[RMDB]
RNA sequence: GGGAACGACUCGAGUAGAGUCGAAAAAAUGUUUGCUCCAUGAUCUAUUAUCGCGUAGAUGAAUCGCUUCUCAGCUCGCAUCUUAGUGUGACUCUUUGACUUGUAAUAAUUGCUUUCGUGGAACACGGAUAUGUGUUUACAGUAGUAAUGAAGAGAACAUGAUCUCGAUCUUCGGAUCGAGAUCAUGAAAAGAAACAACAACAACAAC
Reactivity to 2A3 in 0.01 (KOAc 150mM, MgCl2 10mM, bicine 150mM(pH8.5), 24C), signal-to-noise 1, nucleotides 027 to 156: a000a000u120g000u030u030u020g140c040u020c000c010a020u050g030a070u000c000u020a080u070u110a180u030c100g000c020g040u150a030g030a060u010g090a080a100u190c020g000c020u180u030c010u010c120a050g050c000u000c070g000c040a030u030c070u100u200a120g020u080g060u050g060a000c000u000c010u100u020u040g060a160c030u030u100g060u050a020a100u070a080a150u070u060g030c060u000u050u150c030g090u060g010g030a010a010c030a000c000g110g070a100u140a090u300g030u000g020u020u000u030a030c010a000g060u060a000g000u000a010a060u000g060a050a010g020a000g060a030a000

Chemical mapping of a 207-nucleotide RNA with 2A3. Reactivities are given for positions 27 through 156. High 2A3 reactivity points to a flexible backbone, as in loops and unpaired stretches. For 2A3, 398 sequencing reads were counted.